This 177-nucleotide RNA was probed chemically with DMS.
For DMS, 1,569 sequencing reads were counted.
Reactivities are given for positions 27 through 126.
The reactions ran in a buffer of 150 mM KOAc, 10 mM MgCl2 and 150 mM bicine (pH 8.5), at 24 C.
RNA sequence: GGGAACGACUCGAGUAGAGUCGAAAAAAAAAAAGAUAUGGAUGAGCUGGAGGCAAGAACUACAGGACGUUAUCGGAAACGAUAACUGUCCUGCUUGCCGUUGAAAGCUCAUCCUAAGUCAAAAAAAUCAUUUAGAAUACUUCGGUAUUCUAAAUGAAAAAGAAACAACAACAACAAC
Reactivity to DMS in 0.01 (KOAc 150mM, MgCl2 10mM, bicine 150mM(pH8.5), 24C), signal-to-noise 1, nucleotides 027 to 126: a000a000a040a070a060a150a170g020a030u000a230u020g000g000a010u010g010a000g000c000u000g000g000a030g020g050c000a000a000g010a060a040c130u020a300c000a000g010g010a010c020g010u000u000a000u010c000g000g000a060a020a130c000g010a020u000a010a000c000u020g010u010c000c010u000g000c000u000u000g010c000c010g030u000u010g010a100a070a010g000c000u010c000a000u000c000c000u010a000a090g000u010c020a000a000a110a070a100a100a170